[RMDB]
Source: RMDB library RFMREP, as collected in RNAgym. The record gives the reactivity of an RNA of 177 nucleotides to 2A3.

RNA sequence: GGGAACGACUCGAGUAGAGUCGAAAAUUCUGCCCGUGACAUCAAGAUGCUUGUGAUUAUGCGAAAAUGUUGGGACAUAUCACAGUUUACUUGCUGUCGCAGGCGGAUAAACCAGCCUUCGGGCUGGGCUACGCCUUCUCUUCGGAGAAGGCGUAGCAAAAGAAACAACAACAACAAC
Reactivity to 2A3 in 0.01 (KOAc 150mM, MgCl2 10mM, bicine 150mM(pH8.5), 24C), signal-to-noise 1, nucleotides 027 to 126: u010u000c010u000g000c010c010c010g010u000g000a000c020a020u000c030a020a000g020a030u010g020c020u180u210g040u000g000a020u050u230a000u050g030c000g220a020a060a080a130u300g140u300u230g100g020g040a020c000a000u020a000u010c020a010c000a000g030u020u030u070a210c000u000u000g000c000u000g000u010c000g060c010a000g000g000c040g030g000a010u060a010a030a010c020c010a000g000c010c000u030u070c250g120g000g000c000u000g000g000